[RMDB]
RNA sequence: GGGAACGACUCGAGUAGAGUCGAAAAGCGCUGGCUAUCUGUGGCCCGACUUGGUGUCAACAGUAAAGUUGCUGCCUUUGUGAUGGUCAGCUUAUUUGGAAUAACUUUUUCCAUGUUAUAAAGGCAGGGAUAAUAUAAAAUUCGUUUUAUAUUAUCCAAAAGAAACAACAACAACAAC
Reactivity to 2A3 in 0.01 (KOAc 150mM, MgCl2 10mM, bicine 150mM(pH8.5), 24C), signal-to-noise 7, nucleotides 027 to 126: g110c050g000c010u000g000g000c000u000a010u030c000u020g030u020g020g000c000c000c010g150a300c150u160u300g020g030u160g010u050c040a080a020c010a060g040u150a050a130a050g010u010u010g020c000u000g000c000c000u020u020u020g020u000g030a040u060g000g010u010c000a000g000c010u030u030a120u030u080u040g000g010a000a030u060a080a170c110u150u130u010u020u000c000c000a000u030g030u070u080a100u080a050a010a000g010g000c000a000g000
Reactivity to DMS in 0.01 (KOAc 150mM, MgCl2 10mM, bicine 150mM(pH8.5), 24C), signal-to-noise 5, nucleotides 027 to 126: g020c230g000c010u000g000g000c000u000a030u010c010u010g010u010g000g010c020c010c000g010a130c230u060u020g010g020u070g030u010c020a090a020c040a040g010u000a080a110a160g010u000u010g010c010u000g000c000c000u000u000u010g000u010g010a120u010g010g010u000c040a030g010c010u010u030a020u010u020u010g020g010a030a020u020a070a150c200u020u030u010u010u010c000c000a050u020g010u010u020a040u010a000a020a020g000g010c010a020g010
This 177-nucleotide RNA was probed chemically with 2A3 and DMS. The 2A3 profile rests on 8,968 reads. Conditions: 150 mM KOAc, 10 mM MgCl2 and 150 mM bicine (pH 8.5), 24 C. For 2A3 the reverse transcriptase was SuperScript II with manganese. The data come from the RNA Mapping Database (RMDB), library OK1LIB.